[RMDB]
Chemical mapping of a 177-nucleotide RNA with 2A3 and DMS. It was measured as part of the RMDB library OK2TRN. Conditions: 150 mM KOAc, 10 mM MgCl2 and 150 mM bicine (pH 8.5), 24 C. Values cover nucleotides 27 to 126.

RNA sequence: GGGAACGACUCGAGUAGAGUCGAAAAGUACGCUGUGCAGGAAGGCAUCAACACCGCGAACCUCGCUCUCGAUGGCGUACUCGACGCGAUCCGUAUCGCCGAGGAGGCUCGUCGCCUGGCGCAGGAAUCUGCUGGAGUAGUUCGCUACUCCAGCAGAAAAAGAAACAACAACAACAAC
Reactivity to 2A3 in 0.01 (KOAc 150mM, MgCl2 10mM, bicine 150mM(pH8.5), 24C), signal-to-noise 2, nucleotides 027 to 126: g040u020a030c020g000c030u000g000u000g020c000a030g120g140a110a040g040g020c000a080u080c070a050a100c050a000c040c030g000c010g010a020a030c000c000u040c040g170c030u000c010u020c060g110a110u160g040g000c000g000u060a040c010u020c050g030a050c080g020c040g030a080u090c040c090g070u170a050u110c020g040c010c010g010a030g020g020a020g040g000c020u000c020g050u010c020g020c070c020u060g130g010c030g000c030a010g040g040a010a090
Reactivity to DMS in 0.01 (KOAc 150mM, MgCl2 10mM, bicine 150mM(pH8.5), 24C), signal-to-noise 3, nucleotides 027 to 126: g010u000a040c040g000c000u000g050u020g020c040a080g020g030a120a070g010g040c010a100u020c140a060a060c200a100c120c090g020c030g000a090a110c010c000u000c050g020c060u000c010u010c050g020a080u010g020g020c020g040u000a050c010u000c040g010a180c300g020c030g030a060u000c170c220g020u010a060u010c020g000c020c040g010a130g010g000a050g000g010c030u010c050g010u000c040g000c040c000u010g020g030c070g000c060a070g000g000a110a130